[RMDB]
This 177-nucleotide RNA was probed chemically with 2A3 and DMS.
The RNA was probed in 150 mM KOAc, 10 mM MgCl2 and 150 mM bicine (pH 8.5) at 24 C.
RNA sequence: GGGAACGACUCGAGUAGAGUCGAAAAAGAACAACACAACAUGCAUUGCGUGUUUGUGGAGUUUAGCAUAUUACUUUGAGUUAAUCGGCGUGUUCCACGCAGGCUUUUGUCUUGAACGAUUUACCAUCUACUUAUAUCCCUUCGGGGAUAUAAGUAGAAAAGAAACAACAACAACAAC
Reactivity to 2A3 in 0.01 (KOAc 150mM, MgCl2 10mM, bicine 150mM(pH8.5), 24C), signal-to-noise 4, nucleotides 027 to 126: a000g050a010a000c020a020a010c000a010c000a000a020c000a010u010g040c110a200u060u300g020c020g020u050g010u060u110u100g000u010g000g000a010g000u000u010u010a030g010c050a070u070a110u200u170a130c070u130u160u160g090a130g030u030u050a010a020u020c030g010g010c010g000u020g060u220u070c120c000a010c000g000c020a010g020g050c010u210u190u250u300g030u010c010u020u130g120a100a020c020g030a040u030u000u040a020c020c000a040u030
Reactivity to DMS in 0.01 (KOAc 150mM, MgCl2 10mM, bicine 150mM(pH8.5), 24C), signal-to-noise 3, nucleotides 027 to 126: a130g010a030a020c010a040a300c020a000c000a040a010c010a010u010g000c000a260u000u000g000c010g030u000g010u000u000u000g040u010g010g000a300g000u000u000u000a060g030c120a080u010a070u000u000a040c060u010u010u010g020a080g010u000u000a010a030u010c050g010g000c010g020u000g010u020u000c140c030a110c030g010c020a050g030g010c010u010u000u010u000g010u000c010u000u000g010a150a150c040g020a030u000u000u000a090c030c040a140u000
Values are in units of 0.01, from 0 to 300, in steps of 10. The 2A3 profile rests on 2,958 reads. Reactivities are given for positions 27 through 126.